[RMDB]
RNA sequence: GGGAACGACUCGAGUAGAGUCGAAAAAAACUUUUGUGACUUGCUGAAACGGGACUAAUCUCCUCACCGAGGCUAAGCAAGUAAAAUACGCGUCUCAUAUCCUUACCUGAGGGUGGUAAGGAAAUAACCUGCAACGCUUCCUUCGGGAAGCGUUGAACUAGAAUGUACGUUUCGACGUACAUUCUAGAAAAGAAACAACAACAACAAC
Reactivity to DMS in 0.01 (KOAc 150mM, MgCl2 10mM, bicine 150mM(pH8.5), 24C), signal-to-noise 1, nucleotides 027 to 156: a030a030a020c060u000u000u000u000g000u010g050a120c030u000u010g000c010u000g000a090a080a070c060g010g000g000a050c020u010a150a150u000c030u000c040c010u000c070a120c070c040g000a040g030g010c070u010a090a070g020c030a010a040g010u000a030a030a070a080u010a070c050g000c040g020u000c020u020c020a220u000a140u010c010c020u000u000a040c000c000u000g030a150g020g010g030u020g050g020u000a030a050g000g000a000a000a040u000a050a080c040c060u000g020c000a000a010c000g010c000u000u000c000c020u000u000c300g060g020g000a010a010g010c020g000u010u010g000a000a100
Reactivity to 2A3 in 0.01 (KOAc 150mM, MgCl2 10mM, bicine 150mM(pH8.5), 24C), signal-to-noise 4, nucleotides 027 to 156: a010a000a010c140u150u070u060u100g080u050g030a030c010u010u020g000c010u040g020a030a100a090c060g010g020g010a010c020u050a050a100u070c040u020c040c030u040c030a070c030c080g030a020g050g010c050u060a020a020g000c010a030a030g040u120a020a070a000a000u160a030c050g000c020g060u020c010u010c030a080u090a050u140c000c000u010u000a020c000c000u040g070a090g010g090g000u010g010g000u010a000a000g000g000a000a030a010u010a000a020c020c070u050g000c010a000a000c000g000c000u000u010c000c000u030u010c150g090g000g000a000a000g000c000g000u000u000g000a000a000
An RNA of 207 nucleotides, treated with DMS and 2A3 and read out base by base. The data come from the RNA Mapping Database (RMDB), library M2RFPK. For 2A3, 3,519 sequencing reads were counted. The DMS profile rests on 2,496 reads.